RNA sequence: GGGAACGACUCGAGUAGAGUCGAAAAACCGGAACCUCCACCACGUGCUCGAAUGAGGUGUGUUGACGUCGGGGGAAACCCUCCUGUGUACCAGCGGGAUAGAGAGAAAGACAAAGACCGGAAAACACAAGAUCGAAGCAUUCGUGCUUCGAUCUUGAAAAGAAACAACAACAACAAC
Reactivity to 2A3 in 0.01 (KOAc 150mM, MgCl2 10mM, bicine 150mM(pH8.5), 24C), signal-to-noise 2, nucleotides 027 to 126: a000c020c000g050g000a050a050c000c000u000c010c000a040c020c000a020c030g050u060g060c020u000c050g140a210a150u180g010a030g010g000u060g010u010g000u010u070g030a030c050g010u040c050g000g030g000g020g000a010a010a040c010c030c000u000c000c010u120g020u010g020u070a110c000c030a010g030c010g000g050g010a020u130a030g070a000g010a010g020a010a080a020g060a000c000a030a070a000g050a010c010c000g010g000a100a020a000a000c100a000
Reactivity to DMS in 0.01 (KOAc 150mM, MgCl2 10mM, bicine 150mM(pH8.5), 24C), signal-to-noise 2, nucleotides 027 to 126: a070c040c010g070g010a300a120c040c040u000c020c030a040c080c000a130c090g050u050g030c070u010c120g010a090a090u020g060a110g020g000u000g060u020g020u000u010g010a160c160g000u020c070g000g010g010g000g000a120a070a160c010c010c020u000c030c000u000g010u000g020u030a100c140c100a120g000c050g010g000g000a050u010a040g020a160g030a150g020a120a020a080g000a000c050a000a020a150g000a110c000c000g000g000a090a040a090a070c140a050